[RMDB]
RNA sequence: GGGAACGACUCGAGUAGAGUCGAAAACGGAAGACAGUGAGUGGACGGAAUAAAUCCCCUUCCCACCUCCCCACUGUCCACUCACUGUCUUCCUAAUAGGAAAUAUAAAUCGGGGGUGGGAAGGGGACAUUACUGGAUCGUUCGCGAUCCAGUAAUGAAAAGAAACAACAACAACAAC
Reactivity to 2A3 in 0.01 (KOAc 150mM, MgCl2 10mM, bicine 150mM(pH8.5), 24C), signal-to-noise 2, nucleotides 027 to 126: c010g030g000a000a000g000a000c000a000g000u000g000a000g040u000g060g010a020c030g010g160a070a010u190a080a100a040u110c020c000c000c000u000u000c000c000c000a010c000c000u040c040c070c020c030a060c010u000g000u000c000c000a040c000u000c010a000c000u000g010u000c020u040u010c000c000u040a000a020u020a000g170g000a000a030a000u280a030u090a060a090a060u240c090g010g000g000g000g000u020g000g000g000a000a000g000g000g000g000a000